[RMDB]
RNA sequence: GGGAACGACUCGAGUAGAGUCGAAAAAAAUGAACCUCCCAAUGGUUGGAGGGAGAAUCAUUCUCAGCUUAGACCACUUGCUUGAGUAUAAACCUAACCAGGUUGAUCUAUUUAAUACUCGAGCAACACCCAGAUAUUGAUUCGUCAAUAUCUGGGUAAAAGAAACAACAACAACAAC
Reactivity to DMS in 0.01 (KOAc 150mM, MgCl2 10mM, bicine 150mM(pH8.5), 24C), signal-to-noise 5, nucleotides 027 to 126: a020a000a010u020g010a020a080c240c010u010c000c000c040a090a110u040g020g000u000u020g000g020a100g010g000g000a010g020a100a250u010c040a010u000u000c000u000c000a160g010c140u020u050a060g020a090c110c090a100c150u000u000g000c000u010u000g010a020g010u000a000u000a070a020a010c010c000u000a130a120c300c260a040g010g000u000u010g000a070u030c120u040a090u020u040u010a050a060u000a020c010u010c000g000a000g000c020a020a010c300
Reactivity to 2A3 in 0.01 (KOAc 150mM, MgCl2 10mM, bicine 150mM(pH8.5), 24C), signal-to-noise 6, nucleotides 027 to 126: a000a000a000u050g010a020a040c000c010u020c000c010c030a020a090u150g100g020u090u070g040g020a030g010g050g000a010g040a020a080u030c010a030u050u010c030u000c010a060g030c040u070u120a040g040a070c010c030a070c090u020u020g000c000u000u010g000a000g000u000a030u040a060a030a010c020c000u060a090a090c100c070a030g010g010u000u020g040a060u060c040u110a150u140u200u050a070a020u010a010c000u010c000g000a000g000c000a000a010c000

Overview:
Chemical mapping of a 177-nucleotide RNA with DMS and 2A3. Values cover nucleotides 27 to 126. The RNA was probed in 150 mM KOAc, 10 mM MgCl2 and 150 mM bicine (pH 8.5) at 24 C.